[RMDB]
RNA sequence: GGGAACGACUCGAGUAGAGUCGAAAAUCCAGUACAUGAAGAAGUAUAAGGGUAAUUUCUCCAUAGCUUUAAAGCUAAAAAAUAAAAAAGGAACAUCAUAGUUAGUAGUUUCUAUGAAAGGUGUGGUCUUAAACGUUUCUUUCGAGAAACGUUUAAGAAAAGAAACAACAACAACAAC
Reactivity to 2A3 in 0.01 (KOAc 150mM, MgCl2 10mM, bicine 150mM(pH8.5), 24C), signal-to-noise 4, nucleotides 027 to 126: u000c000c010a010g030u030a020c060a050u280g110a120a090g070a150a020g090u050a040u020a150a190g030g030g000u120a120a150u060u070u020c070u010c000c010a050u030a040g010c010u190u190u300a180a190a040g000c000u050a040a050a030a020a050a050u300a070a110a000a020a000a050g110g000a020a070c010a040u010c010a010u040a050g030u070u040a000g060u050a020g020u110u010u030c010u030a050u030g030a120a020a040g070g020u120g000u030g100g010u000
Reactivity to DMS in 0.01 (KOAc 150mM, MgCl2 10mM, bicine 150mM(pH8.5), 24C), signal-to-noise 1, nucleotides 027 to 126: u020c010c000a220g000u040a040c050a090u000g020a110a060g010a120a090g010u010a040u030a140a220g000g010g010u000a100a060u010u000u010c000u010c000c170a260u000a000g000c030u010u050u070a090a090a080g000c000u000a000a000a070a020a060a130u020a040a000a030a030a110a020g010g000a030a070c040a020u020c090a000u000a020g010u010u010a070g000u050a040g000u030u010u010c000u010a050u000g000a070a060a030g000g010u020g040u030g000g080u020